[RMDB]
Chemical mapping of a 177-nucleotide RNA with DMS. For DMS the reverse transcriptase was MarathonRT. It was measured as part of the RMDB library OK2TST.
RNA sequence: GGGAACGACUCGAGUAGAGUCGAAAAGCGGGCCAUUGUGCGUGAACCGGCGGUUUUCUUGUUUGAUGAGCCUCUUUCUAAUCUCGAUGCCAAGUUACGAGUGCAGAUGCGCCUUGAGCUGCAACAGGCAAAGCCAAUGGUUCGCCAUUGGCUUUGCAAAAGAAACAACAACAACAAC
Reactivity to DMS in 0.01 (KOAc 150mM, MgCl2 10mM, bicine 150mM(pH8.5), 24C), signal-to-noise 1, nucleotides 027 to 126: g020c100g000g010g010c020c020a070u000u000g000u010g010c040g000u000g010a050a100c030c010g000g020c160g000g000u000u000u000u000c020u010u000g000u000u000u010g010a060u010g010a070g020c110c030u010c030u000u000u000c060u000a090a160u000c050u000c000g010a120u000g010c050c080a060a110g010u020u020a110c090g010a080g030u000g040c140a020g010a090u010g020c110g000c060c040u020u010g000a100g010c020u000g010c020a040a120c180a060g010